[RMDB]
RNA sequence: GGGAACGACUCGAGUAGAGUCGAAAAGAUAUGGAUUGCAAUACACAGCAACAGCUAAGCUCGGAAACGAGCUUAGACAUGCUGGUAUGCAAUCCUAAGUCAAAGCGAGUUCGUUCGCGAACUCGCACGAUGCUUAGCCGUUCGCGGCUAAGCAUCGAAAAGAAACAACAACAACAAC
Reactivity to DMS in 0.01 (KOAc 150mM, MgCl2 10mM, bicine 150mM(pH8.5), 24C), signal-to-noise 2, nucleotides 027 to 126: g010a020u000a300u000g000g010a030u000u000g000c010a030a060u000a000c030a110c010a010g000c020a070a120c300a300g000c000u000a000a000g000c000u000c000g000g000a040a160a250c030g000a040g020c000u000u000a000g000a090c110a160u000g030c010u000g010g010u000a010u040g000c000a020a000u000c000c000u000a030a040g010u000c010a080a170a080g030c010g000a030g030u010u020c000g050u000u000c280g000c000g050a020a030c000u000c000g010c000a050
Reactivity to 2A3 in 0.01 (KOAc 150mM, MgCl2 10mM, bicine 150mM(pH8.5), 24C), signal-to-noise 2, nucleotides 027 to 126: g000a030u060a060u170g030g000a010u030u010g000c030a230a300u000a060c300a010c010a300g030c010a030a110c050a150g110c010u000a000a020g010c000u020c010g010g070a030a100a040c020g010a000g000c030u000u000a000g010a000c010a000u060g010c000u010g040g010u020a000u030g040c000a000a000u010c000c000u010a040a000g010u000c080a140a050a050g000c010g010a010g010u020u010c020g010u050u090c190g010c000g140a010a000c000u000c010g010c000a000
Structure probing data (DMS and 2A3) for a 177-nucleotide construct.